[RMDB]
RNA sequence: GGGAACGACUCGAGUAGAGUCGAAAAGUGCACGACUUCGGUCGUGCACAAAUAAAGGGAGUCGAGUGCGUACGGCACAGUCAUACGCUGACGCCACGACAAAAAGUAACGUCUUCGGACGUUACAAGUUAUUUGUACUGUUCGCAGUACAAAUAACAAAAGAAACAACAACAACAAC
Reactivity to DMS in 0.01 (KOAc 150mM, MgCl2 10mM, bicine 150mM(pH8.5), 24C), signal-to-noise 7, nucleotides 027 to 126: g010u000g010c000a010c010g010a020c000u000u010c190g030g010u000c000g030u000g010c010a000c000a010a050a050u010a050a090a120g010g000g010a130g010u000c000g000a100g020u010g020c010g000u000a080c060g010g000c010a100c180a090g000u020c150a100u010a110c160g010c010u000g000a040c040g020c000c010a210c040g000a040c070a040a060a050a100a110g010u000a000a000c000g010u000c000u000u010c190g020g010a020c000g010u000u000a000c000a050a090
Reactivity to 2A3 in 0.01 (KOAc 150mM, MgCl2 10mM, bicine 150mM(pH8.5), 24C), signal-to-noise 8, nucleotides 027 to 126: g010u000g000c000a000c020g020a020c040u060u110c250g030g000u000c000g000u000g000c000a000c000a000a000a000u020a000a010a000g090g040g020a090g010u010c010g010a030g080u260g030c000g000u030a250c030g030g010c020a020c030a110g150u110c040a070u080a210c110g000c020u020g000a000c000g000c010c020a040c030g020a010c060a010a110a010a000a010g000u000a010a000c000g010u000c000u030u080c220g070g000a000c000g000u010u000a000c000a000a000
Structure probing data (DMS and 2A3) for a 177-nucleotide construct. The 2A3 profile rests on 19,828 reads.